[RMDB]
RNA sequence: GGGAACGACUCGAGUAGAGUCGAAAAAGCAUACCAGCUAGUACGCGAGCUGGUAUGCAAAAAUUGGUGUAGCCUUACCGUAGUAGGCACAAAAACGUCAGCUGGAUCUACGGAUCCAGCUGACGAAAAAAGUGUUUUGUGUUCGCACAAAACACAACGAUAUAAGACCGUUCGCGGUCUUAUAUCGAAAAGAAACAACAACAACAAC
Reactivity to 2A3 in 0.01 (KOAc 150mM, MgCl2 10mM, bicine 150mM(pH8.5), 24C), signal-to-noise 2, nucleotides 027 to 156: a000g000c000a000u000a000c000c020a010g030c010u020a030g040u090a020c220g040c110g080a010g010c010u000g010g000u000a030u000g000c000a010a020a010a040a030u090u180g000g000u060g070u160a020g000c000c000u000u010a000c000c040g000u000a000g020u010a000g010g000c000a010c020a080a040a030a000a000c010g000u020c010a030g020c000u000g010g010a000u000c000u000a070c270g080g000a010u010c030c000a000g000c000u030g000a000c000g010a000a000a000a000a000a000g000u010g000u000u000u000u000g010u000g010u020u050c070g030c070a010c000a000a000a000a000c000a000c000a010a020
An RNA of 207 nucleotides, treated with 2A3 and read out base by base. The RNA was probed in 150 mM KOAc, 10 mM MgCl2 and 150 mM bicine (pH 8.5) at 24 C. 2A3 adducts were read by reverse transcription with SuperScript II with manganese.